This 177-nucleotide RNA was probed chemically with 2A3. For 2A3, 750 sequencing reads were counted.
[RMDB]
RNA sequence: GGGAACGACUCGAGUAGAGUCGAAAAUCGCCGACGAUCGCCAAUAUCCAAUCCCCGCCAGCUGUCACCGGGCAAUAUGGGAGCAUAAAUCAUCGGCCACGCCCCCUUCCCGCACAGCAACGGGAUGGUGAGGGAGCAUCUUCGGAUGCUCCCUCACAAAAGAAACAACAACAACAAC
Reactivity to 2A3 in 0.01 (KOAc 150mM, MgCl2 10mM, bicine 150mM(pH8.5), 24C), signal-to-noise 2, nucleotides 027 to 126: u130c020g020c000c000g040a080c020g000a010u080c010g100c040c050a120a060u030a090u220c080c050a060a030u080c020c000c010c050g010c020c000a030g000c020u000g000u070c000a070c020c000g040g000g000c070a030a010u140a070u220g110g000g020a090g010c040a020u150a220a120a020u140c080a040u110c050g000g030c010c000a070c080g030c000c020c020c000c020u000u010c000c000c000g000c040a130c000a050g040c050a040a040c030g040g000g000a030u010g000
Record summary:
The reactions ran in a buffer of 150 mM KOAc, 10 mM MgCl2 and 150 mM bicine (pH 8.5), at 24 C.